This 177-nucleotide RNA was probed chemically with DMS and 2A3. Conditions: 150 mM KOAc, 10 mM MgCl2 and 150 mM bicine (pH 8.5), 24 C.
[RMDB]
RNA sequence: GGGAACGACUCGAGUAGAGUCGAAAAGAUAUGGACUGUACUCUUCCGAUAAGACCGUAUCGGAAACGAUACAGGUCUUUUGACGGAAGGUACAGUCCUAAGUCAAACUCGAUGUUCGCAUCGAGAACAAACAGGUCAGGUUCGCCUGACCUGUUUGAAAAGAAACAACAACAACAAC
Reactivity to DMS in 0.01 (KOAc 150mM, MgCl2 10mM, bicine 150mM(pH8.5), 24C), signal-to-noise 3, nucleotides 027 to 126: g000a030u000a210u000g000g000a020c000u000g010u000a020c000u000c000u000u000c000c000g010a220u010a020a000g000a020c030c010g000u000a000u000c000g010g010a070a020a090c010g010a010u000a010c010a150g070g000u000c000u010u000u010u000g020a140c230g000g000a000a010g000g010u000a000c020a020g000u000c000c000u000a000a040g000u000c040a130a170a210c020u000c000g010a020u000g010u000u030c300g020c010a030u000c000g030a020g000a130a210
Reactivity to 2A3 in 0.01 (KOAc 150mM, MgCl2 10mM, bicine 150mM(pH8.5), 24C), signal-to-noise 2, nucleotides 027 to 126: g010a010u010a020u040g000g010a000c000u000g000u040a000c070u040c080u300u050c020c070g210a090u070a300a020g020a000c000c000g000u000a010u000c000g000g000a050a030a000c030g000a000u000a020c160a220g000g000u030c020u000u010u020u010g120a120c210g000g000a000a000g010g010u000a000c020a000g010u000c000c000u000a000a000g000u000c000a000a050a110c000u010c000g010a010u000g030u110u110c300g020c150a020u010c010g010a000g100a010a080
Annotation: For DMS, 3,112 sequencing reads were counted. The data come from the RNA Mapping Database (RMDB), library TTRDES.